[RMDB]
RNA sequence: GGGAACGACUCGAGUAGAGUCGAAAAGAUAUGGAUCGCGCCAGGGAGGAACUCGGAAACGAGAAUUCCAUCGAUCUGGUGCGAUCCUAAGUCAAAAGUGAGACUUUAGUUCGCUAAAGUCUCACAAGAUCGGACAUAAGUUCGCUUAUGUCCGAUCAAAAGAAACAACAACAACAAC
Reactivity to 2A3 in 0.01 (KOAc 150mM, MgCl2 10mM, bicine 150mM(pH8.5), 24C), signal-to-noise 2, nucleotides 027 to 126: g010a000u050a010u140g010g010a000u000c000g000c010g000c030c000a020g100g060g000a010g030g000a020a010c000u010c010g030g010a060a040a030c030g010a000g020a070a250u140u000c010c000a090u300c020g080a070u020c000u000g030g000u020g000c000g000a000u000c000c000u010a000a000g010u000c020a010a000a020a240g000u000g000a000g000a000c010u010u000u020a010g020u040u080c190g010c150u000a000a020a000g000u000c000u000c000a000c000a000a000
Reactivity to DMS in 0.01 (KOAc 150mM, MgCl2 10mM, bicine 150mM(pH8.5), 24C), signal-to-noise 2, nucleotides 027 to 126: g000a020u000a300u000g000g000a010u000c000g010c000g020c000c000a010g000g000g010a000g010g000a020a060c000u000c010g010g020a040a100a140c010g010a000g020a130a120u000u000c000c000a250u000c130g010a050u010c000u000g000g020u000g010c000g000a010u000c010c010u000a010a060g000u000c030a080a050a070a130g040u000g000a000g000a010c000u000u000u000a010g040u000u000c200g010c010u000a000a010a010g000u010c000u000c000a000c010a020a030
Source information: Chemical mapping of a 177-nucleotide RNA with 2A3 and DMS. The DMS profile rests on 1,981 reads. Values cover nucleotides 27 to 126. Reactivities are rounded to 0.1 and cut off at 0 and 3.